[RMDB]
RNA sequence: GGGAACGACUCGAGUAGAGUCGAAAAUACGCCAAUUUCGAUUGGCGUAACACGCAAACCGGCCGAAAGGCAUUUUAUGCGUACGCUGGCGAAAGCCUAAAAACGCACUGUCAUUCGUGACAGUGAAUACGCUUCUUUCAUUCGUGAAAGAAGCGUAAAAAGAAACAACAACAACAAC
Reactivity to 2A3 in 0.01 (KOAc 150mM, MgCl2 10mM, bicine 150mM(pH8.5), 24C), signal-to-noise 2, nucleotides 027 to 126: u040a000c000g000c000c010a010a020u030u090u060c210g170a030u000u000g000g000c000g000u000a000a020c040a000c000g000c030a000a040a000c030c010g060g030c020c010g070a100a030a010g000g000c000a010u000u020u030u050a030u050g000c000g000u020a070c150g050c160u050g000g020c020g040a090a010a000g000c000c000u020a130a060a010a000a010c100g010c010a010c000u000g010u000c010a030u000u060c150g130u040g010a000c000a010g000u030g000a000a000
Reactivity to DMS in 0.01 (KOAc 150mM, MgCl2 10mM, bicine 150mM(pH8.5), 24C), signal-to-noise 2, nucleotides 027 to 126: u010a020c020g020c000c000a000a000u000u000u010c170g010a010u000u000g000g000c000g020u000a050a030c180a050c020g040c000a010a060a130c230c230g000g070c000c000g010a060a050a160g030g000c000a010u000u000u010u000a050u000g000c030g020u000a090c260g020c240u000g010g000c010g020a110a060a130g000c000c000u000a030a050a020a070a100c260g000c000a010c020u000g020u000c000a070u000u000c130g020u000g020a010c000a000g010u000g030a070a090